RNA sequence: GGGAACGACUCGAGUAGAGUCGAAAACUUCUGGUGUUCGCACCAGAAGAAAUCCGUACUCGAGGCGCCAGUCCAGAGAUAUUGUGGCUGUUCCCAGCCGGAAAACCGCUCCCUUCGGGGAGCGGAACACCCUCUUAUAGUUCGCUAUAAGAGGGUGAAAAGAAACAACAACAACAAC
Reactivity to DMS in 0.01 (KOAc 150mM, MgCl2 10mM, bicine 150mM(pH8.5), 24C), signal-to-noise 3, nucleotides 027 to 126: c000u000u000c000u000g010g010u010g020u000u010c200g030c000a000c000c000a020g000a000a010g010a010a060a120u000c010c010g020u000a020c010u000c010g010a020g010g020c050g010c210c060a040g010u000c030c050a080g000a160g000a130u010a060u010u000g010u000g010g010c010u000g000u000u000c020c010c000a300g010c070c060g000g000a080a040a060a070c020c010g000c000u000c020c000c000u000u010c170g020g000g000g010a010g010c010g010g000a010a040
Reactivity to 2A3 in 0.01 (KOAc 150mM, MgCl2 10mM, bicine 150mM(pH8.5), 24C), signal-to-noise 3, nucleotides 027 to 126: c010u010u000c010u010g030g020u020g030u060u090c210g020c070a000c000c000a000g000a000a000g000a010a030a000u000c010c000g010u010a000c010u000c020g030a000g090g060c050g060c050c000a010g080u050c030c030a040g020a000g020a170u080a060u300u190g090u170g060g030c020u000g000u000u030c020c010c010a000g050c050c010g090g040a040a060a010a070c000c010g030c030u010c010c000c040u020u030c060g070g000g000g020a000g000c010g010g000a000a000
Source: RMDB library M2PK50, as collected in RNAgym.
Chemical mapping of a 177-nucleotide RNA with DMS and 2A3.
For DMS, 3,127 sequencing reads were counted.
For 2A3 the reverse transcriptase was SuperScript II with manganese.